[RMDB]
RNA sequence: GGGAACGACUCGAGUAGAGUCGAAAAGUGGUAUCAACCACCUUACUUUCUAAAGCUGUUAAACGAUUAUUUUGUAGAGCGUUAACAGUGUCAUAAGUUGAAAUAGUUUUUGUUAGUCUAGCAUCUACUGUUUCAGCAGCUUUUGCUAAAGGGAUCCGAUUUAGCACUAAUUCGUUAGUGCUAAAUCAAAAGAAACAACAACAACAAC
Reactivity to 2A3 in 0.01 (KOAc 150mM, MgCl2 10mM, bicine 150mM(pH8.5), 24C), signal-to-noise 9, nucleotides 027 to 156: g010u020g040g020u120a170u300c140a150a130c010c010a020c010c000u040u120a090c020u040u100u090c060u120a100a060a040g000c000u010g020u030u040a100a190a040c020g020a100u110u070a140u100u300u140u150g190u160a100g040a010g110c010g000u000u000a000a000c000a010g000u010g010u070c020a080u070a300a080g020u050u030g030a020a020a020u040a040g020u000u010u020u020u020g060u030u020a130g080u060c230u110a010g020c000a020u000c010u020a020c000u010g020u010u030u030c020a020g000c010a030g030c030u060u080u130u180g020c030u130a070a040a040g070g020g050a050u060c060c020
Reactivity to DMS in 0.01 (KOAc 150mM, MgCl2 10mM, bicine 150mM(pH8.5), 24C), signal-to-noise 3, nucleotides 027 to 156: g040u020g010g040u000a160u000c210a150a150c010c010a010c010c030u010u020a100c100u000u000u000c030u000a080a120a230g020c010u000g020u000u000a020a050a060c020g010a100u000u000a180u000u000u000u000g010u010a130g010a050g000c030g020u000u000a010a020c000a020g020u000g010u000c100a110u010a060a170g030u010u000g000a020a030a040u010a030g010u000u000u000u000u010g040u000u000a110g010u000c190u000a100g020c000a020u000c030u000a010c000u010g020u000u000u010c080a090g030c000a090g000c030u000u000u000u000g010c020u030a040a090a120g010g020g000a130u000c050c150